RNA sequence: GGGAACGACUCGAGUAGAGUCGAAAAGACAUGGGAGCAGAAUAAUCACUCUCCCGCACUGGCUUGGUUACUUGAUUAUCUAGGUGACAGUGUCACGCUAAAUACUGAGUGGUUAAGGGAUGAUAGAGACUACCCUAGUGUUCGCACUAGGGUAGUCAAAAGAAACAACAACAACAAC
Reactivity to 2A3 in 0.01 (KOAc 150mM, MgCl2 10mM, bicine 150mM(pH8.5), 24C), signal-to-noise 2, nucleotides 027 to 126: g050a040c050a090u180g000g000g020a010g050c170a040g110a100a040u170a120a020u090c010a030c030u010c000u000c000c000c020g020c010a050c030u050g080g010c020u050u050g030g000u060u030a050c060u070u100g060a080u070u160a040u050c090u050a000g020g010u020g040a030c010a170g090u040g010u230c010a020c060g150c040u060a080a070a010u110a110c050u040g010a000g040u020g020g040u050u030a040a090g060g020g010a030u060g000a020u120a080g140a020
Reactivity to DMS in 0.01 (KOAc 150mM, MgCl2 10mM, bicine 150mM(pH8.5), 24C), signal-to-noise 3, nucleotides 027 to 126: g010a100c110a050u010g000g030g010a030g000c120a030g030a060a060u010a110a060u010c150a090c030u000c020u000c010c000c020g000c100a050c110u000g000g010c020u010u010g000g000u000u000a030c090u040u010g020a090u000u010a020u000c050u010a030g000g000u000g010a070c010a180g020u020g000u000c010a020c060g010c040u000a000a020a050u020a050c140u010g010a020g000u010g000g010u000u000a060a090g010g010g000a060u000g010a110u010a100g000a270

Annotation:
The record gives the reactivity of an RNA of 177 nucleotides to 2A3 and DMS. The data come from the RNA Mapping Database (RMDB), library OK2TST. In probing experiments dimethyl sulfate is read out at A N1 and C N3, which are open when not base-paired. The RNA was probed in 150 mM KOAc, 10 mM MgCl2 and 150 mM bicine (pH 8.5) at 24 C. Values cover nucleotides 27 to 126.